[RMDB]
RNA sequence: GGGAACGACUCGAGUAGAGUCGAAAACAAAGCCCCUGACGGUAUCCUCAACGACUUCGUCCGGGUUGUUGAUGAAACGCUGCAUGGUAUCUCCUGUAAUAUGAAUGAGCUGCGGGCUCAAAGAAUAGACGAUCAUUUUAUUCGUAAAAUGAUCGUCAAAAGAAACAACAACAACAAC
Reactivity to 2A3 in 0.01 (KOAc 150mM, MgCl2 10mM, bicine 150mM(pH8.5), 24C), signal-to-noise 2, nucleotides 027 to 126: c020a000a060a010g070c020c020c000c010u010g040a060c020g000g060u050a050u060c020c010u000c010a050a040c010g040a020c000u120u110c120g150u030c120c060g000g060g000u010u000g000u000u010g020a060u050g000a000a050a060c060g000c030u040g010c030a050u090g060g000u010a050u030c080u030c010c020u060g060u130a080a040u180a150u210g160a160a040u040g000a020g000c020u090g030c160g230g100g000c000u000c030a030a090a020g080a050a050u100a120
Reactivity to DMS in 0.01 (KOAc 150mM, MgCl2 10mM, bicine 150mM(pH8.5), 24C), signal-to-noise 3, nucleotides 027 to 126: c080a080a190a270g000c090c010c040c080u010g000a110c080g000g010u000a060u000c010c030u000c070a010a050c010g000a040c050u000u000c070g010u000c100c070g000g000g020u010u000g000u000u000g000a060u000g000a060a070a100c080g030c060u010g020c050a030u010g010g000u020a080u000c070u000c020c020u000g000u000a130a120u010a100u000g000a160a150u010g000a050g020c020u000g050c140g000g010g020c010u000c050a020a040a090g000a100a120u000a120